[RMDB]
RNA sequence: GGGAACGACUCGAGUAGAGUCGAAAAGUCGAGCCCACCGACCAGGGCGCACGAGUGACGAUGAGCAUCGCCAGCAACUACAAAAUCCCCGUCGAUGCCUCGGCGAACGUGCAUUCGGUGUCAGCGGUGCUCGAUCCUAUUUCGAUAGGAUCGAGCAAAAAGAAACAACAACAACAAC
Reactivity to DMS in 0.01 (KOAc 150mM, MgCl2 10mM, bicine 150mM(pH8.5), 24C), signal-to-noise 3, nucleotides 027 to 126: g000u000c000g000a050g000c030c000c030a200c040c030g010a000c030c040a150g030g000g000c070g050c040a010c000g000a070g050u030g000a030c000g000a040u040g000a140g010c000a010u000c010g000c110c100a130g000c150a090a130c120u030a070c300a100a040a140a130u010c030c020c000c100g000u010c010g000a030u000g000c000c000u000c020g020g000c000g000a040a070c030g050u000g000c010a050u000u010c010g040g000u050g000u000c040a070g030c040g000g010
Reactivity to 2A3 in 0.01 (KOAc 150mM, MgCl2 10mM, bicine 150mM(pH8.5), 24C), signal-to-noise 3, nucleotides 027 to 126: g010u000c000g010a020g020c000c000c010a030c010c040g010a040c020c010a110g030g000g060c060g010c020a070c030g030a050g040u090g030a010c010g040a050u050g020a020g050c010a010u010c020g010c000c020a030g060c040a080a090c080u270a140c140a050a160a030a100u130c020c000c010c020g020u050c010g010a020u000g000c000c010u010c020g040g000c010g020a100a050c020g010u000g020c010a000u030u000c000g060g000u050g010u040c030a010g040c000g020g070